[RMDB]
RNA sequence: GGGAACGACUCGAGUAGAGUCGAAAAGAUAUGGACUUGAACUACGUCAGACUAAGACAGUGGUUCGGAAACGAACCAUCGAGUCUGUCCGCAAGUCCUAAGUCAAAGACUAGGUUCGCCUAGUCAAGUACUUUUCACACUUCGGUGUGAAAAGUACAAAAGAAACAACAACAACAAC
Reactivity to DMS in 0.01 (KOAc 150mM, MgCl2 10mM, bicine 150mM(pH8.5), 24C), signal-to-noise 2, nucleotides 027 to 126: g000a080u020a300u010g000g000a010c000u000u000g010a030a190c150u000a110c220g010u000c020a010g000a000c000u000a150a140g000a040c300a120g010u000g000g000u020u000c000g030g000a050a090a090c000g000a030a000c000c010a010u000c040g020a040g120u010c010u000g010u000c080c210g010c030a010a000g000u000c000c000u000a010a030g000u000c000a060a050a070g000a000c000u000a000g010g020u000u020c300g080c010c000u000a010g010u000c000a000a070
Reactivity to 2A3 in 0.01 (KOAc 150mM, MgCl2 10mM, bicine 150mM(pH8.5), 24C), signal-to-noise 2, nucleotides 027 to 126: g040a000u070a050u140g000g000a010c010u030u020g030a180a120c080u180a060c270g090u090c090a020g000a000c010u110a260a050g070a070c050a050g060u020g040g020u000u020c040g000g040a050a050a010c010g000a000a000c000c000a000u020c000g020a020g000u000c020u050g060u020c030c060g030c020a000a000g010u000c000c010u000a070a020g010u000c050a170a100a050g010a010c000u000a020g030g050u040u080c300g120c030c010u020a000g000u000c000a010a010

Annotation:
This 177-nucleotide RNA was probed chemically with DMS and 2A3. The DMS profile rests on 1,317 reads. Source: RMDB library TTRDEL, as collected in RNAgym. Conditions: 150 mM KOAc, 10 mM MgCl2 and 150 mM bicine (pH 8.5), 24 C. For DMS the reverse transcriptase was MarathonRT.